[RMDB]
RNA sequence: GGGAACGACUCGAGUAGAGUCGAAAAGAGCGGGCAAACCUGGCCCCAAUGGAUGUAAAGCUGAAAGAUCUGUUUUCAUCUAGGGCCGAAUUUCUCUCAGUCGGAGGAUCUCCCCAGAUGAGCUGGAACAUAUGCUAGUAUUCGUACUAGCAUAUGUAAAAGAAACAACAACAACAAC
Reactivity to DMS in 0.01 (KOAc 150mM, MgCl2 10mM, bicine 150mM(pH8.5), 24C), signal-to-noise 9, nucleotides 027 to 126: g010a080g010c060g010g010g010c130a050a060a100c110c050u020g000g010c000c000c010c300a070a110u020g000g000a020u000g000u030a010a020a020g000c020u000g010a110a170a110g010a140u020c050u010g010u000u000u010u000c010a000u000c000u000a080g010g000g010c040c020g010a060a050u020u020u020c040u000c010u020c050a090g010u020c110g000g000a090g010g010a080u020c050u010c020c010c000c040a110g010a110u020g000a070g010c020u000g000g000a300
Reactivity to 2A3 in 0.01 (KOAc 150mM, MgCl2 10mM, bicine 150mM(pH8.5), 24C), signal-to-noise 9, nucleotides 027 to 126: g060a010g020c070g000g040g020c050a060a110a120c030c060u090g020g010c020c000c000c000a070a140u140g040g010a000u020g070u300a020a020a020g020c020u030g080a110a140a040g150a240u090c030u090g020u010u010u010u010c010a000u000c010u040a050g010g010g000c020c010g020a020a040u060u110u030c040u000c000u000c030a050g130u100c030g040g030a040g040g040a050u010c060u060c040c010c000c010a030g020a130u120g040a050g060c020u040g010g030a030